Structure probing data (DMS and 2A3) for a 177-nucleotide construct. The DMS profile rests on 8,700 reads.

[RMDB]
RNA sequence: GGGAACGACUCGAGUAGAGUCGAAAAACUCUAGUGAAUUCUGGCCAUGCACCAUGUGAAUAUCUAUCGGACAAUACGAACUGUGCUAGAGACUAUGUGGUGACAUAUCGACCCGGGAAGAUUACAACGUUGUAAGGAAUUUCGAUUCCUUACAACGAAAAGAAACAACAACAACAAC
Reactivity to DMS in 0.01 (KOAc 150mM, MgCl2 10mM, bicine 150mM(pH8.5), 24C), signal-to-noise 7, nucleotides 027 to 126: a080c030u000c020u000a100g020u010g020a120a140u000u000c030u000g010g010c050c050a070u000g010c040a040c020c030a040u010g020u000g010a100a100u000a080u010c030u000a060u000c090g020g000a080c060a060a080u010a120c190g010a090a090c130u010g010u010g010c050u000a030g000a050g000a100c140u010a030u010g020u000g000g000u000g010a080c040a030u000a070u000c080g000a080c070c010c100g000g010g010a070a070g000a140u010u010a060c120a090a200
Reactivity to 2A3 in 0.01 (KOAc 150mM, MgCl2 10mM, bicine 150mM(pH8.5), 24C), signal-to-noise 4, nucleotides 027 to 126: a000c030u030c020u030a040g040u010g150a110a080u090u010c020u050g030g000c040c020a020u040g010c000a030c020c010a010u050g040u020g120a110a030u080a040u160c040u040a050u100c050g040g020a020c050a130a110u140a180c080g100a120a050c110u050g020u110g120c000u010a010g020a010g010a030c020u020a020u080g020u000g000g030u010g030a070c010a030u070a030u120c070g040a110c000c000c000g000g020g030a080a030g070a090u150u170a060c020a140a020
The 2A3 profile rests on 6,067 reads. For 2A3 the reverse transcriptase was SuperScript II with manganese.